[RMDB]
RNA sequence: GGGAACGACUCGAGUAGAGUCGAAAACAUUUGCAGAGAGCAUCUCACUGUUUCAUUUGCUCCUGGUAAAAACCCCUAGAACUCUUUCUAGACAAAGCAGGAACCACCCUGGGGUGGUGAGGUGGGGACCACCUCGUAGCUUCGGCUACGAGGUGGUAAAAGAAACAACAACAACAAC
Reactivity to 2A3 in 0.01 (KOAc 150mM, MgCl2 10mM, bicine 150mM(pH8.5), 24C), signal-to-noise 2, nucleotides 027 to 126: c010a050u090u110u200g040c030a030g200a010g000a000g100c020a030u060c020u050c030a190c080u070g120u090u050u100c040a040u000u000u060g010c000u000c000c000u010g000g000u060a050a020a010a030a040c000c000c000c010u000a010g040a100a040c030u060c050u270u150u000c060u020a060g000a190c110a000a070a000g040c000a000g110g010a080a090c010c020a000c010c000c030u190g100g090g000g000u100g030g000u080g030a060g010g080u130g000g010g000g000
Reactivity to DMS in 0.01 (KOAc 150mM, MgCl2 10mM, bicine 150mM(pH8.5), 24C), signal-to-noise 1, nucleotides 027 to 126: c100a150u170u060u000g040c000a000g050a220g000a000g040c000a000u000c200u040c220a080c130u000g040u050u000u000c070a230u010u000u000g000c010u000c000c060u010g000g030u000a040a000a060a150a090c030c000c000c020u000a060g000a020a150c300u000c210u010u030u000c000u010a000g020a080c140a100a010a060g010c040a000g000g000a060a040c040c090a030c080c000c010u000g000g000g000g000u000g020g000u000g000a040g090g000u000g060g000g000g000